[RMDB]
RNA sequence: GGGAACGACUCGAGUAGAGUCGAAAAGGCUUUCUGCAGAAUAUAAAUUUGCACUGAUGUUUUGAAGGUAAGUAGAAUAUAACCUUGCAGGUGAAGAAGGGAAGUAUGGUCAGGUCAGAAGAAGAGCAUGUGCAAGGGAGGUGUGGGCGCUCGGAAACACCUCCUGAUCGUUCGCGAUCAGGAGGUGAAAAGAAACAACAACAACAAC
Reactivity to 2A3 in 0.01 (KOAc 150mM, MgCl2 10mM, bicine 150mM(pH8.5), 24C), signal-to-noise 2, nucleotides 027 to 156: g040g030c000u040u090u040c060u040g010c020a020g090a170a010u120a020u120a130a090a070u140u030u050g060c040a040c030u040g050a120u060g070u010u190u120u090g110a010a010g030g010u050a080a010g020u090a060g090a110a050u160a030u010a140a000c000c000u010u030g000c080a060g070g030u040g030a050a020g030a000a040g020g000g000a000a070g000u010a020u070g050g000u020c070a030g000g070u060c010a000g000a050a010g010a020a050g010a050g000c080a060u070g020u010g050c020a020a020g050g000g000a140g030g020u250g020u080g020g030g000c040g000c010u000c030g000g020a110a030a000